RNA sequence: GGGAACGACUCGAGUAGAGUCGAAAAAUUGGUGGCGUAGCAAGAAAUAUUGCUGAGAACUUAGGUAGGCUUGGCGAAACGGUCGCUUUUUUAUCUGCUAGUGGACAAGAUAGUGAAUGGGAAAUGACUGAAUCCAUGCAUUCGUGCAUGGAUUCAGAAAAGAAACAACAACAACAAC
Reactivity to 2A3 in 0.01 (KOAc 150mM, MgCl2 10mM, bicine 150mM(pH8.5), 24C), signal-to-noise 2, nucleotides 027 to 126: a010u090u110g030g000u020g000g010c050g000u010a000g050c020a000a030g190a020a160a000u300a140u040u030g100c040u050g070a070g020a120a060c040u070u080a120g140g000u000a000g000g040c030u030u030g000g000c010g100a070a030a000c010g150g000u060c000g160c020u050u070u000u000u040u070a050u000c010u010g000c000u020a040g080u040g060g030a050c000a030a030g050a060u000a010g000u080g040a080a220u150g000g020g000a050a050a050u100g010a010
The data come from the RNA Mapping Database (RMDB), library OK1LIB. Structure probing data (2A3) for a 177-nucleotide construct. The reactions ran in a buffer of 150 mM KOAc, 10 mM MgCl2 and 150 mM bicine (pH 8.5), at 24 C. For 2A3 the reverse transcriptase was SuperScript II with manganese.